[RMDB]
RNA sequence: GGGAACGACUCGAGUAGAGUCGAAAAGCCCGGGCCUUCGGGCCCGGGCAUACGCCGUAGCGCCGAUGGUAGUGUGGGGUGUCCCCAUGCGAGAGUAGGGAAGUAGGCCUUCGUUCGCGAAGGCCAACCCUCAAUUCUAUUUCGAUAGAAUUGAGGGAAAAGAAACAACAACAACAAC
Reactivity to DMS in 0.01 (KOAc 150mM, MgCl2 10mM, bicine 150mM(pH8.5), 24C), signal-to-noise 1, nucleotides 027 to 126: g050c030c000c050g170g040g190c050c020u020u010c270g090g180g220c070c000c000g080g100g140c000a010u000a000c070g000c010c040g000u000a040g000c110g010c000c010g000a130u020g000g030u000a120g010u000g000u000g000g000g000g010u000g000u000c030c000c000c010a020u000g020c000g000a210g000a020g000u010a070g000g000g000a130a080g000u000a060g030g000c000c000u000u000c000g030u020u010c220g030c000g000a000a010g040g000c000c000a010a090
Reactivity to 2A3 in 0.01 (KOAc 150mM, MgCl2 10mM, bicine 150mM(pH8.5), 24C), signal-to-noise 1, nucleotides 027 to 126: g030c010c060c020g120g070g000c140c110u230u190c300g080g000g020c000c000c000g000g000g030c020a000u010a020c020g010c020c020g130u070a030g140c050g070c070c000g050a030u010g020g020u010a010g020u000g010u010g100g010g000g000u300g170u240c020c010c010c010a020u050g020c000g000a040g000a010g030u030a020g000g040g000a040a040g020u150a020g000g000c000c020u020u030c000g050u020u080c250g010c000g090a010a000g000g050c000c000a010a020
Record summary
An RNA of 177 nucleotides, treated with DMS and 2A3 and read out base by base. For DMS the reverse transcriptase was MarathonRT. The data come from the RNA Mapping Database (RMDB), library M2PK50. For DMS, 1,064 sequencing reads were counted. For 2A3 the reverse transcriptase was SuperScript II with manganese.